Overview:
The data come from the RNA Mapping Database (RMDB), library OK1LIB. Chemical mapping of a 177-nucleotide RNA with 2A3. 2A3 adducts were read by reverse transcription with SuperScript II with manganese.
RNA sequence: GGGAACGACUCGAGUAGAGUCGAAAAGCACGUCGUUACGACGACGUGCAAGAAAACAAAAGGAGGCGUGAUGUCGGACGCCAAUGAAUCAAACCGACAAAAAGCAUGGUGGUACGCCACCAUGCAACCCUGCUAGGCAUUUCGAUGCCUAGCAGGGAAAAGAAACAACAACAACAAC
Reactivity to 2A3 in 0.01 (KOAc 150mM, MgCl2 10mM, bicine 150mM(pH8.5), 24C), signal-to-noise 1, nucleotides 027 to 126: g000c000a000c020g000u000c000g000u000u080a030c300g030a000c000g000a000c000g000u000g000c000a000a000g000a000a040a000a030c030a010a110a060a000g210g060a090g020g000c000g000u070g070a090u070g020u020c000g010g010a000c000g010c010c010a000a070u130g000a000a040u140c040a130a000a020c000c000g000a000c010a110a130a000a000a000g010c000a000u000g010g000u000g000g000u010a000c300g100c010c000a010c000c000a000u060g000c000a000a000